Chemical mapping of a 177-nucleotide RNA with DMS and 2A3.
For 2A3 the reverse transcriptase was SuperScript II with manganese.
It was measured as part of the RMDB library RFMREP.
The DMS profile rests on 2,864 reads.
The RNA was probed in 150 mM KOAc, 10 mM MgCl2 and 150 mM bicine (pH 8.5) at 24 C.
Reactivities are given for positions 27 through 126.

[RMDB]
RNA sequence: GGGAACGACUCGAGUAGAGUCGAAAACUGCAGCCUGUAGCUGUGACGCGAUUUUUAAUGCGUAGGGUAGGAAGGAGCCGUAGAUGUUUCGGUCGUGGCCAGAAUGGAGGCAACGAUGAAACACUUCGUCUUAACAUCUGUUCGCAGAUGUUAAGACAAAAGAAACAACAACAACAAC
Reactivity to DMS in 0.01 (KOAc 150mM, MgCl2 10mM, bicine 150mM(pH8.5), 24C), signal-to-noise 3, nucleotides 027 to 126: c090u000g030c040a030g010c010c110u000g000u000a110g020c030u000g000u000g000a050c060g010c040g000a060u000u010u010u000u020a090a130u000g010c030g010u010a070g020g020g010u000a080g000g000a070a060g000g000a110g020c060c090g010u000a040g020a100u010g000u010u000u000c010g020g030u000c000g000u000g000g010c000c000a150g000a140a150u010g000g000a170g010g000c020a020a010c010g010a020u000g000a010a020a000c010a020c060u000u010c180
Reactivity to 2A3 in 0.01 (KOAc 150mM, MgCl2 10mM, bicine 150mM(pH8.5), 24C), signal-to-noise 2, nucleotides 027 to 126: c010u050g020c000a020g030c000c070u170g140u240a030g000c010u030g040u050g050a000c030g010c020g030a030u070u050u020u060u300a120a070u200g000c000g000u020a050g080g010g040u040a020g030g020a080a030g040g040a010g010c030c020g000u030a000g010a210u060g000u020u020u030c040g090g020u020c000g000u010g030g000c000c010a030g070a150a150u300g080g090a030g050g010c000a000a000c000g000a010u040g010a000a050a010c010a000c020u070u100c080